RNA sequence: GGGAACGACUCGAGUAGAGUCGAAAAACGAGGUACGCCUCGAAAAUAUGACCGGUGUCAUAGCCUCUAGCACACAGAGGUCGCGUGCGUUCAACUCCCCCCCUUUUCCGAGGGUAUCGGAAACCAAAAAACACAAUUUGGUUCGCCAAAUUGUGAAUCCUUAUCUUUACUUCGGUAAAGAUAAGGAAAAAGAAACAACAACAACAAC
Reactivity to 2A3 in 0.01 (KOAc 150mM, MgCl2 10mM, bicine 150mM(pH8.5), 24C), signal-to-noise 3, nucleotides 027 to 156: a010c030g010a030g050g030u040a010c040g010c030c030u110c070g050a050a020a010a040u020a010u010g010a030c040c170g230g030u180g010u140c010a020u040a050g010c000c010u000c010u020a060g100c130a030c010a010c010a130g010a000g000g000u010c020g010c010g020u050g000c010g060u080u060c040a090a110c090u030c010c000c000c000c000c010c000u000u120u000u000c000c000g000a000g000g010g010u080a010u000c010g000g000a000a000a000c020c020a080a030a030a030a050a020c000a000c000a000a000u000u000u000g020g000u020u020c070g020c050c010a010a000a000u000u000g000u000g020a000a040
Reactivity to DMS in 0.01 (KOAc 150mM, MgCl2 10mM, bicine 150mM(pH8.5), 24C), signal-to-noise 2, nucleotides 027 to 156: a130c100g000a050g020g050u000a010c040g000c010c040u000c060g050a040a030a060a190u000a010u000g000a050c020c080g020g030u000g010u000c020a020u000a040g010c010c010u000c010u000a160g040c130a130c090a110c110a130g000a050g010g030u000c030g020c030g020u010g020c000g040u010u010c040a060a140c050u000c000c000c000c000c000c000c010u000u000u000u000c020c020g030a040g000g010g010u010a060u000c010g010g000a020a030a120c200c070a000a040a090a100a090a120c010a020c010a020a020u010u000u000g000g020u020u010c300g000c030c000a000a010a000u000u000g020u000g000a030a100
The record gives the reactivity of an RNA of 207 nucleotides to 2A3 and DMS.
The reactions ran in a buffer of 150 mM KOAc, 10 mM MgCl2 and 150 mM bicine (pH 8.5), at 24 C.
High 2A3 reactivity points to a flexible backbone, as in loops and unpaired stretches.
2A3 adducts were read by reverse transcription with SuperScript II with manganese.
For DMS the reverse transcriptase was MarathonRT.
Source: RMDB library M2RFPK, as collected in RNAgym.
For DMS, 4,722 sequencing reads were counted.